[RMDB]
RNA sequence: GGGAACGACUCGAGUAGAGUCGAAAAGCCUGGAUCCAGGGCCUUCUGGACUCCAUCGAGGAGGACAAGGAGCGGUACGCGGCGUUUGGAAAGAUCAAGGGCCUGCUGACGUCAGCGAGCGAGGAGCGCACUUAAGGGCAUUCGUGCCCUUAAGUGCAAAAGAAACAACAACAACAAC
Reactivity to 2A3 in 0.01 (KOAc 150mM, MgCl2 10mM, bicine 150mM(pH8.5), 24C), signal-to-noise 1, nucleotides 027 to 126: g060c000c000u030g100g030a030u030c020c000a010g090g050g000c030c000u030u040c020u050g030g000a000c000u030c000c000a030u100c110g090a120g050g000a020g030g010a000c010a050a060g050g000a020g080c010g000g060u080a010c050g020c000g070g020c080g000u030u110u050g140g060a160a150a050g070a060u130c090a070a110g030g040g030c000c050u060g000c000u050g030a030c020g000u020c020a050g000c000g030a020g000c030g000a040g090g040a020g040c060
Reactivity to DMS in 0.01 (KOAc 150mM, MgCl2 10mM, bicine 150mM(pH8.5), 24C), signal-to-noise 1, nucleotides 027 to 126: g010c010c000u030g030g020a070u000c020c040a050g000g020g020c120c080u010u010c050u010g010g000a090c060u000c000c020a110u000c140g000a130g010g010a090g000g010a070c070a050a060g000g000a070g000c040g000g010u000a070c090g000c060g000g000c050g030u000u010u000g000g000a080a050a060g010a090u000c070a080a150g010g000g000c030c050u010g000c080u000g010a060c120g010u000c020a030g020c030g000a090g010c030g000a090g010g000a100g000c130
This 177-nucleotide RNA was probed chemically with 2A3 and DMS.
The reactions ran in a buffer of 150 mM KOAc, 10 mM MgCl2 and 150 mM bicine (pH 8.5), at 24 C.
For DMS, 1,343 sequencing reads were counted.